An RNA of 177 nucleotides, treated with DMS and 2A3 and read out base by base. Values cover nucleotides 27 to 126. DMS adducts were read by reverse transcription with MarathonRT.

[RMDB]
RNA sequence: GGGAACGACUCGAGUAGAGUCGAAAAAAAAUCCUUGCUUGUGAUUCAUUAUCGACACGGGUUCGGUGGUACCAGGCCGAACUCACCGGGAGGCACCCGGCACCAUGCAGUAUACAGAGAUUAGGCACUAGUAGUACAGGUUCGCCUGUACUACUAGAAAAGAAACAACAACAACAAC
Reactivity to DMS in 0.01 (KOAc 150mM, MgCl2 10mM, bicine 150mM(pH8.5), 24C), signal-to-noise 5, nucleotides 027 to 126: a060a060a060a090u010c010c000u000u010g010c030u000u000g020u010g000a100u010u000c060a080u000u000a090u010c060g000a090c110a100c130g010g000g020u000u000c010g000g020u010g000g010u010a090c160c090a120g000g010c010c000g010a030a010c030u000c010a060c040c040g010g000g000a140g010g010c100a110c040c020c020g000g010c110a030c040c040a040u030g000c020a060g000u020a070u010a060c150a060g000a090g000a080u010u010a080g010g020c120a190
Reactivity to 2A3 in 0.01 (KOAc 150mM, MgCl2 10mM, bicine 150mM(pH8.5), 24C), signal-to-noise 4, nucleotides 027 to 126: a000a000a000a000u050c020c010u020u050g040c040u060u060g030u050g060a130u110u050c040a060u050u190a080u120c050g030a020c030a030c100g020g010g000u000u010c010g000g010u040g030g060u090a080c040c010a050g100g010c010c000g000a000a000c000u000c010a010c000c010g030g010g000a120g080g020c070a080c000c000c000g010g000c010a020c010c010a030u080g020c030a010g040u080a030u050a120c050a010g080a000g020a110u080u130a050g080g000c020a010

It was measured as part of the RMDB libraries RFM100 and RFMREP.